[RMDB]
RNA sequence: GGGAACGACUCGAGUAGAGUCGAAAAAUAAUGCCUUGAGUGUGGUCAAGCAAGAUUUCUCUACCCAAAAACCUGCAGAAAUGAUAAGCAACAUGGUUACAUCAUCUGACGAAAUGGAUAAUCACACAUGAAAAUAUUCUUUCGAGAAUAUUUUCAUAAAAGAAACAACAACAACAAC
Reactivity to DMS in 0.01 (KOAc 150mM, MgCl2 10mM, bicine 150mM(pH8.5), 24C), signal-to-noise 3, nucleotides 027 to 126: a030u020a090a070u000g010c130c050u000u000g010a180g030u010g010u000g000g000u010c030a030a040g000c010a060a080g000a100u000u010u000c030u010c060u020a130c130c010c020a030a080a040a230a090c140c050u010g020c010a060g000a050a120a050u020g000a090u010a050a090g000c040a070a070c100a050u000g020g000u000u000a050c050a050u000c060a030u010c050u000g010a090c080g000a100a060a080u010g020g010a120u010a050a020u000c020a030c030a030c090
Reactivity to 2A3 in 0.01 (KOAc 150mM, MgCl2 10mM, bicine 150mM(pH8.5), 24C), signal-to-noise 2, nucleotides 027 to 126: a000u120a020a030u090g010c000c010u030u020g020a030g010u040g000u020g020g000u000c000a000a020g000c000a010a040g000a150u000u120u010c090u000c050u080a090c030c020c020a020a020a050a120a030c020c020u050g010c030a010g040a100a110a010u040g030a020u050a070a020g090c000a000a090c020a170u150g170g000u050u050a030c010a020u040c000a010u020c030u050g060a060c030g060a130a080a010u110g030g010a060u080a040a020u040c000a020c030a010c030